[RMDB]
RNA sequence: GGGAACGACUCGAGUAGAGUCGAAAAGGUGAAGGGCGAGUUGCGCUGGUUGGAAGAGCAGCAACUGGUGAAGAUCGAGGACGUCAGCAACGGCGCAGUGCUGGUCGCGAAGCUGACUGAGCGCGGCACGCCAGCCAAGAUUCGUCUUGGCUGGCGUAAAAGAAACAACAACAACAAC
Reactivity to 2A3 in 0.01 (KOAc 150mM, MgCl2 10mM, bicine 150mM(pH8.5), 24C), signal-to-noise 2, nucleotides 027 to 126: g060g020u100g040a030a020g000g030g030c040g000a040g050u070u040g020c040g020c040u020g070g090u050u110g020g080a120a050g020a030g060c020a000g000c020a030a060c010u060g030g000u080g060a060a020g050a050u100c080g000a040g000g060a030c020g010u050c000a030g000c010a060a050c050g070g000c050g010c080a030g010u040g100c050u070g040g070u060c020g000c020g020a030a010g060c070u040g010a050c050u040g090a010g020c050g000c030g030g000c030
Reactivity to DMS in 0.01 (KOAc 150mM, MgCl2 10mM, bicine 150mM(pH8.5), 24C), signal-to-noise 3, nucleotides 027 to 126: g000g000u000g020a120a080g020g000g010c050g010a090g020u000u010g030c040g000c030u010g000g000u000u000g000g010a080a080g010a080g000c040a040g000c020a060a110c040u000g020g040u010g020a070a060g010a110u000c060g010a120g010g000a150c120g010u000c030a050g040c060a070a100c100g020g000c010g020c050a080g000u010g010c050u000g000g020u000c000g030c040g000a090a170g010c080u000g000a050c030u010g000a140g020c080g010c060g000g000c060